This 177-nucleotide RNA was probed chemically with 2A3 and DMS. For DMS the reverse transcriptase was MarathonRT. Values cover nucleotides 27 to 126. The data come from the RNA Mapping Database (RMDB), library OK2TST. The DMS profile rests on 9,069 reads.
RNA sequence: GGGAACGACUCGAGUAGAGUCGAAAAAUAACAUCUAUUACUCCGUGCAGGAUGGGAUCACGCAGGCUGAAUUUGUUGUAGUGGAUAGAGAAAUCUAUUUGCUCCUCAUUUAAGGACGGAAAAGGCAAUUCAACAGAAGAUUCGUCUUCUGUUGAAUAAAAGAAACAACAACAACAAC
Reactivity to 2A3 in 0.01 (KOAc 150mM, MgCl2 10mM, bicine 150mM(pH8.5), 24C), signal-to-noise 3, nucleotides 027 to 126: a000u100a030a040c030a060u040c020u120a140u090u150a090c010u000c020c020g030u050g020c020a020g000g080a030u040g010g020g010a030u060c020a020c100g050c040a030g070g000c020u060g030a090a060u090u060u080g030u050u020g020u040a000g000u010g020g010a010u010a000g010a000g020a030a040a020u000c000u010a030u030u020u020g010c010u000c010c000u010c000a020u060u070u060a090a030g020g010a020c020g030g030a040a070a010a010g080g040c030a020
Reactivity to DMS in 0.01 (KOAc 150mM, MgCl2 10mM, bicine 150mM(pH8.5), 24C), signal-to-noise 6, nucleotides 027 to 126: a070u010a080a110c090a060u000c040u010a110u000u000a140c080u000c020c030g030u000g010c080a110g000g000a060u000g000g000g000a100u000c060a050c100g010c070a050g010g000c050u000g010a100a050u000u000u000g020u000u000g000u010a020g030u000g000g000a010u000a010g010a010g000a070a080a110u000c010u000a020u000u000u000g010c010u000c010c010u000c030a040u000u000u010a100a160g000g000a070c050g010g000a030a040a070a080g010g010c120a090